[RMDB]
RNA sequence: GGGAACGACUCGAGUAGAGUCGAAAACUUCAGUAUCGCACGGUUGCCCCAGUGAGAGAAGGCUGCGGCGGAUUGCUCUAUUAGUUUGGGCUGUGUAUUGGUUGCGCGCUGAGAGUAUCACCAUCGGCUAAAUAUAAUUAUUCGUAAUUAUAUUUAGAAAAGAAACAACAACAACAAC
Reactivity to 2A3 in 0.01 (KOAc 150mM, MgCl2 10mM, bicine 150mM(pH8.5), 24C), signal-to-noise 5, nucleotides 027 to 126: c010u030u020c020a020g010u020a080u210c000g010c010a010c020g050g040u080u100g020c000c000c000c000a020g010u060g050a170g000a020g040a150a050g150g000c010u030g010c050g040g000c030g070g100a120u080u150g020c020u000c010u040a160u180u090a100g160u050u100u070g020g000g000c020u020g030u020g020u070a060u040u130g110g030u100u040g000c000g000c000g000c020u000g010a050g000a010g090u030a030u090c060a050c090c030a040u060c020g040g000
Reactivity to DMS in 0.01 (KOAc 150mM, MgCl2 10mM, bicine 150mM(pH8.5), 24C), signal-to-noise 4, nucleotides 027 to 126: c020u020u010c040a080g020u020a050u030c030g020c030a050c050g000g010u010u020g000c020c010c030c020a060g030u000g010a140g010a100g020a140a120g000g020c020u000g020c300g000g010c020g010g000a060u030u020g010c000u000c030u020a110u030u020a080g010u010u030u000g010g000g010c020u010g010u020g020u020a050u010u020g010g020u020u010g010c040g020c280g020c010u000g010a070g010a060g010u000a040u010c060a080c020c010a050u020c020g000g000
About this RNA
Source: RMDB library OK1LIB, as collected in RNAgym. Chemical mapping of a 177-nucleotide RNA with 2A3 and DMS. Values cover nucleotides 27 to 126. The reactions ran in a buffer of 150 mM KOAc, 10 mM MgCl2 and 150 mM bicine (pH 8.5), at 24 C. For 2A3 the reverse transcriptase was SuperScript II with manganese.